[RMDB]
RNA sequence: GGGAACGACUCGAGUAGAGUCGAAAAUGCAGUUGAGUUCAAGAAAAUUUUAAGGCAUCUACUGUAGAUGGCUAAGGUUCUGUCACAGAGGCUGACAUAGGAUAGUCAAAGGGAGCAGAGGGAUUUCCUCUGUUCUAAGUUUCGACUUAGAACAGAGAAAAGAAACAACAACAACAAC
Reactivity to 2A3 in 0.01 (KOAc 150mM, MgCl2 10mM, bicine 150mM(pH8.5), 24C), signal-to-noise 3, nucleotides 027 to 126: u060g010c010a000g010u040u050g020a030g030u050u080c090a130a070g120a120a190a150a160u110u220u120u200a120a050g040g000c010a050u000c020u060a070c070u070g100u130a020g010a090u040g090g000c000u000a000a060g040g000u080u030c030u050g050u030c000a010c000a060g100a040g130g030c040u010g000a010c000a010u080a030g080g000a050u030a080g040u040c050a080a040a000g020g020g020a040g010c060a010g040a040g000g040g020a040u050u050u070c010
Reactivity to DMS in 0.01 (KOAc 150mM, MgCl2 10mM, bicine 150mM(pH8.5), 24C), signal-to-noise 7, nucleotides 027 to 126: u010g010c040a020g010u010u010g010a220g010u000u010c080a080a100g010a050a050a070a070u010u010u010u000a080a110g010g000c010a020u000c010u010a090c220u000g020u000a040g010a040u000g000g010c030u000a070a050g020g010u000u000c050u000g010u000c070a050c060a100g010a160g020g010c080u000g000a070c040a030u010a100g000g000a080u000a060g000u010c070a040a090a120g000g000g000a060g010c060a030g010a080g000g010g000a160u000u000u000c040
Structure probing data (2A3 and DMS) for a 177-nucleotide construct. For DMS, 9,936 sequencing reads were counted. For 2A3 the reverse transcriptase was SuperScript II with manganese. Values cover nucleotides 27 to 126.